This 207-nucleotide RNA was probed chemically with DMS and 2A3.
[RMDB]
RNA sequence: GGGAACGACUCGAGUAGAGUCGAAAAGCAGCAGCGUCACCACUAUAGGUAUCCAGCUGUCAGCCAUAGUAGCAAUGAUGAUGACACAUGCGCCCAUUGCCAAUGCAGACGCUAGCGAGAAACGAUCAUACGACCCCGACUCUCUGUUCGGAUCAUAGUGUAUUAGUAUGUUCGCAUACUAAUACACAAAAGAAACAACAACAACAAC
Reactivity to DMS in 0.01 (KOAc 150mM, MgCl2 10mM, bicine 150mM(pH8.5), 24C), signal-to-noise 3, nucleotides 027 to 156: g020c040a150g020c030a060g000c040g030u000c020a080c020c040a090c060u000a100u000a130g070g020u000a100u010c040c050a180g000c030u010g020u000c050a160g000c020c040a100u000a070g010u000a100g020c000a070a060u010g010a050u010g010a180u000g000a130c030a100c050a110u010g010c020g050c000c020c010a140u000u000g020c030c020a070a120u010g000c040a110g030a090c040g000c020u010a090g010c000g010a100g000a080a050a100c050g000a080u000c040a140u000a100c060g000a130c030c010c010c010g020a080c050u000c050u000c070u000g020u000u000c060g010g000a120u000c020a040u000a190
Reactivity to 2A3 in 0.01 (KOAc 150mM, MgCl2 10mM, bicine 150mM(pH8.5), 24C), signal-to-noise 9, nucleotides 027 to 156: g070c080a000g000c010a010g020c010g040u030c020a020c070c010a030c060u100a070u100a150g020g010u080a120u130c060c030a050g010c120u080g090u110c030a020g010c020c010a040u030a060g050u040a020g030c010a060a050u070g040a050u050g030a040u110g060a070c020a020c020a180u190g050c040g020c030c030c000a020u030u060g020c010c020a090a080u150g050c030a040g010a040c010g000c020u040a050g010c030g040a040g070a060a080a010c080g020a040u090c030a040u110a130c060g080a100c020c030c010c010g020a020c010u040c010u020c050u140g080u140u040c050g030g010a050u090c030a060u150a080

Description: The DMS profile rests on 7,665 reads. The RNA was probed in 150 mM KOAc, 10 mM MgCl2 and 150 mM bicine (pH 8.5) at 24 C. DMS adducts were read by reverse transcription with MarathonRT.